[RMDB]
RNA sequence: GGGAACGACUCGAGUAGAGUCGAAAACACCCUUGGAAUCAUGAGAUUAACAGGAGAGGGUCCAACAUUUGACGCUAAUACUGAAUGCAACAUUGCCUACACACACGCCAGGUUUCACAUACCCAAACUCACUCGAUUAGUUCGCUAAUCGAGUGAGAAAAGAAACAACAACAACAAC
Reactivity to DMS in 0.01 (KOAc 150mM, MgCl2 10mM, bicine 150mM(pH8.5), 24C), signal-to-noise 2, nucleotides 027 to 126: c150a150c010c000c000u000u000g000g010a080a060u000c020a080u000g010a130g000a040u010u000a090a090c100a060g000g010a170g000a090g000g010g010u000c060c070a110a110c090a100u030u010u010g000a110c130g020c060u000a050a090u000a100c040u010g010a000a050u010g020c050a100a070c080a090u010u000g030c050c020u010a060c090a040c040a010c070a050c080g000c030c030a070g000g020u010u010u010c020a040c100a080u000a160c020c010c010a010a080a200
Reactivity to 2A3 in 0.01 (KOAc 150mM, MgCl2 10mM, bicine 150mM(pH8.5), 24C), signal-to-noise 2, nucleotides 027 to 126: c030a040c000c010c000u010u080g130g090a090a090u070c030a050u170g040a040g010a170u140u120a080a010c040a060g040g050a040g030a010g020g120g000u050c020c020a060a070c030a160u040u070u150g040a020c050g010c090u070a070a070u100a240c070u040g120a060a040u080g020c000a050a030c000a100u020u110g000c010c020u100a070c100a000c000a000c000a000c030g050c010c020a020g030g000u010u060u000c040a040c000a040u070a090c000c000c010a010a020a060
The data come from the RNA Mapping Database (RMDB), library OK2TRN.
Chemical mapping of a 177-nucleotide RNA with DMS and 2A3.
The 2A3 profile rests on 1,917 reads.
The DMS profile rests on 1,582 reads.
Reactivities are given for positions 27 through 126.
For DMS the reverse transcriptase was MarathonRT.
The RNA was probed in 150 mM KOAc, 10 mM MgCl2 and 150 mM bicine (pH 8.5) at 24 C.